Structure probing data (DMS and 2A3) for a 177-nucleotide construct. Conditions: 150 mM KOAc, 10 mM MgCl2 and 150 mM bicine (pH 8.5), 24 C. 2A3 is a SHAPE reagent: it acylates the 2'-hydroxyl of flexible nucleotides of all four kinds.
RNA sequence: GGGAACGACUCGAGUAGAGUCGAAAAUAUAUUUGAUGCAGAUGUUAAAUAUAUAGCAUUUGGUAAUGACCACAAUGAUAUUUUCAUGUUACAACAUGCUAGUAGUGGCUAUAUUAUAGGACCAUCAAUUCUAUCGCCUAUUCGUAGGCGAUAGAAUAAAAGAAACAACAACAACAAC
Reactivity to DMS in 0.01 (KOAc 150mM, MgCl2 10mM, bicine 150mM(pH8.5), 24C), signal-to-noise 2, nucleotides 027 to 126: u010a040u000a020u000u000u010g010a050u010g000c130a090g020a090u000g020u000u020a010a070a130u010a100u010a080u000a070g010c040a070u010u000u010g010g000u000a070a050u000g020a070c050c040a030c120a090a060u000g010a180u000a020u000u000u020u000c010a030u010g000u000u020a060c220a130a070c040a010u000g000c080u010a040g010u000a030g020u000g020g000c030u000a030u010a040u010u000a110u000a090g000g000a100c030c020a050u020c110a040
Reactivity to 2A3 in 0.01 (KOAc 150mM, MgCl2 10mM, bicine 150mM(pH8.5), 24C), signal-to-noise 1, nucleotides 027 to 126: u040a000u000a020u030u140u110g030a040u080g040c040a050g040a200u090g060u060u020a050a170a070u140a110u120a060u060a000g000c010a040u000u020u090g020g050u090a070a090u110g080a060c000c030a010c040a040a080u200g080a000u040a060u120u100u070u060c000a000u020g090u050u130a070c050a110a040c000a050u040g020c000u040a020g040u020a010g040u040g000g000c050u040a040u020a000u130u090a070u020a040g020g100a060c000c000a010u060c030a020